[RMDB]
RNA sequence: GGGAACGACUCGAGUAGAGUCGAAAAACAUAGCAACUAUAUACUGUGACGAUUGCACAGAAUCGCAGCCAGCAUCAGUGAGUCCGCCCGAAGAAAUAGAAUCCUCACCGACGUCAGUAUUUGAGGCGCAUUAAGCAUUAUUCGUAAUGCUUAAUGCAAAAGAAACAACAACAACAAC
Reactivity to 2A3 in 0.01 (KOAc 150mM, MgCl2 10mM, bicine 150mM(pH8.5), 24C), signal-to-noise 6, nucleotides 027 to 126: a000c030a050u130a020g040c020a010a080c050u050a030u040a020u040a300c030u050g030u040g090a060c050g190a220u070u300g020c050a040c000a070g110a090a040u080c060g020c030a010g020c020c020a010g020c010a040u050c010a040g050u020g070a020g040u000c000c020g030c010c030c020g070a070a040g050a050a080a020u140a040g080a040a050u030c000c010u020c030a030c020c040g090a070c040g060u090c040a030g040u050a150u090u110u150g080a030g020g040c050
Reactivity to DMS in 0.01 (KOAc 150mM, MgCl2 10mM, bicine 150mM(pH8.5), 24C), signal-to-noise 6, nucleotides 027 to 126: a080c070a080u010a080g010c070a040a070c070u010a100u010a100u000a100c030u000g010u010g010a120c090g020a110u010u000g010c070a050c070a080g000a090a050u000c080g010c050a070g010c030c030a060g010c050a050u000c050a050g020u010g010a080g000u000c030c070g000c030c020c030g020a060a070g010a050a080a070u010a080g000a090a080u000c040c010u000c040a060c100c060g010a070c060g000u010c070a020g000u000a060u000u000u000g020a070g010g010c290
Structure probing data (2A3 and DMS) for a 177-nucleotide construct. For DMS the reverse transcriptase was MarathonRT. For DMS, 6,174 sequencing reads were counted. The 2A3 profile rests on 7,330 reads.